[RMDB]
RNA sequence: GGGAACGACUCGAGUAGAGUCGAAAAAGGCUUUUCAUAUCAUUUUGUUUUCAGGUAAACAAAUCUGGCAAAUCUCCACUGCUUGAGUCAUUAAAACUACUCACUCAAGAAGGCAUAUACACGACAGGGCAUAUCCAUGAUUCGUCAUGGAUAUGCCAAAAGAAACAACAACAACAAC
Reactivity to DMS in 0.01 (KOAc 150mM, MgCl2 10mM, bicine 150mM(pH8.5), 24C), signal-to-noise 1, nucleotides 027 to 126: a030g000g000c040u000u110u100u020c010a110u000a010u080c040a080u010u000u000u000g000u000u000u020u010c160a130g030g000u000a010a130a080c090a020a030a000u070c180u000g000g000c000a050a120a110u000c000u000c000c020a080c000u000g000c000u000u000g000a000g000u000c140a030u000u010a010a000a040a100c090u010a020c070u070c090a160c040u000c050a110a120g020a100a040g000g020c110a070u010a120u000a020c180a080c040g000a070c220a120g000
Reactivity to 2A3 in 0.01 (KOAc 150mM, MgCl2 10mM, bicine 150mM(pH8.5), 24C), signal-to-noise 3, nucleotides 027 to 126: a000g080g020c060u100u040u050u040c070a040u050a080u180c040a080u100u050u000u090g060u010u030u000u100c090a060g020g040u240a100a070a070c010a010a090a010u000c000u010g010g000c000a000a050a110u050c030u050c030c000a050c030u070g010c000u030u030g000a000g020u000c030a070u000u250a040a080a040a000c030u030a020c010u010c040a010c010u000c020a000a030g080a030a050g060g000c040a070u050a000u020a070c090a020c100g040a030c060a030g070
Source: RMDB library OK1LIB, as collected in RNAgym. Chemical mapping of a 177-nucleotide RNA with DMS and 2A3. The 2A3 profile rests on 1,709 reads. The RNA was probed in 150 mM KOAc, 10 mM MgCl2 and 150 mM bicine (pH 8.5) at 24 C. 2A3 adducts were read by reverse transcription with SuperScript II with manganese. Values are in units of 0.01, from 0 to 300, in steps of 10. For DMS the reverse transcriptase was MarathonRT.